[RMDB]
RNA sequence: GGGAACGACUCGAGUAGAGUCGAAAAGAUAUGGAAUCGGCCAAGGGAGAACGAAGUGGCGUUGAAAUCGAUCGGAAACGAUCGAUGGAGCCACUAAGUUCGAAGAACUUGGCCGAUUCCUAAGUCAGUGUCAAAAAUAGUUCGCUAUUUUUGACACAAAAGAAACAACAACAACAAC
Reactivity to DMS in 0.01 (KOAc 150mM, MgCl2 10mM, bicine 150mM(pH8.5), 24C), signal-to-noise 2, nucleotides 027 to 126: g010a070u000a300u000g000g000a010a000u000c000g000g000c010c000a030a010g040g030g010a180g000a000a000c000g000a300a050g020u000g000g010c000g000u000u010g030a130a130a020u000c000g010a020u000c030g040g010a170a150a180c020g010a010u000c000g020a000u000g000g000a120g010c010c000a000c000u000a020a300g000u000u000c000g030a130a230g000a200a210c010u000u000g010g020c000c000g000a000u000u000c000c000u000a010a050g000u020c050a150